[RMDB]
RNA sequence: GGGAACGACUCGAGUAGAGUCGAAAAGAUAUGGAGGCACGAAGAACAUUUGAUACGAUACACGAAUCUGACGGUCGGAAACGACCGCAGACUAUGUAUCGUAUCAAAUGGGAGUGCCUCCUAAGUCCUUUACACAAACCUUCGGGUUUGUGUAAAGAAAAGAAACAACAACAACAAC
Reactivity to 2A3 in 0.01 (KOAc 150mM, MgCl2 10mM, bicine 150mM(pH8.5), 24C), signal-to-noise 2, nucleotides 027 to 126: g060a010u110a080u300g030g010a000g010g000c020a000c030g210a300a140g010a190a010c040a020u010u000u000g000a020u000a000c000g010a000u020a000c010a000c060g120a100a300u020c060u030g260a300c040g000g000u010c030g030g000a080a120a060c030g010a000c010c010g000c000a020g000a000c020u000a010u000g000u000a010u020c000g000u000a000u010c000a010a000a000u000g000g000g010a010g000u000g000c000c010u010c000c010u000a010a000g010u000c000
Reactivity to DMS in 0.01 (KOAc 150mM, MgCl2 10mM, bicine 150mM(pH8.5), 24C), signal-to-noise 2, nucleotides 027 to 126: g010a090u000a300u000g000g010a000g010g020c000a000c000g020a110a190g020a140a240c000a000u000u000u000g010a020u000a000c000g000a020u000a000c000a020c130g000a070a130u000c000u000g000a160c010g010g000u000c000g010g000a070a110a210c000g010a000c000c010g020c000a010g010a030c040u010a090u000g010u000a000u000c000g000u010a000u000c000a000a000a000u000g000g030g000a150g000u000g000c010c000u000c000c000u010a000a090g000u000c060